[RMDB]
RNA sequence: GGGAACGACUCGAGUAGAGUCGAAAAUUCGUUAAAAAAUAAUGCAUUAAACUGACUGAUCAUCCAUAUUAUUGUAAAGGAGGUAUGUAACAUGGCAGGCGAUAUCGUAGGUACAAUCGGUGACUUCCACUAUCCUUUACUUCGGUAAAGGAUAGUGAAAAGAAACAACAACAACAAC
Reactivity to DMS in 0.01 (KOAc 150mM, MgCl2 10mM, bicine 150mM(pH8.5), 24C), signal-to-noise 7, nucleotides 027 to 126: u010u000c050g020u010u010a010a030a100a090a070a070u020a040a060u020g000c040a060u000u010a050a100a100c080u000g000a130c050u000g010a090u010c040a070u010c040c030a060u020a080u010u010a060u010u000g010u000a050a090a070g010g010a090g000g010u000a030u010g000u010a030a070c110a040u010g010g000c060a040g010g010c030g010a050u010a030u010c050g010u010a040g020g000u000a030c120a040a040u020c080g000g020u000g000a150c080u000u010c130
Reactivity to 2A3 in 0.01 (KOAc 150mM, MgCl2 10mM, bicine 150mM(pH8.5), 24C), signal-to-noise 8, nucleotides 027 to 126: u050u020c020g020u030u070a060a040a010a020a040a090u180a060a060u110g050c040a040u090u110a140a130a060c040u040g090a020c030u030g040a080u070c030a030u000c030c020a030u060a080u230u100a140u110u130g130u110a070a040a050g040g020a010g030g010u050a040u080g050u030a040a050c030a050u040g050g000c010a000g020g030c030g010a020u010a010u140c060g030u050a040g020g070u060a040c050a040a060u050c040g040g010u030g030a060c010u030u000c010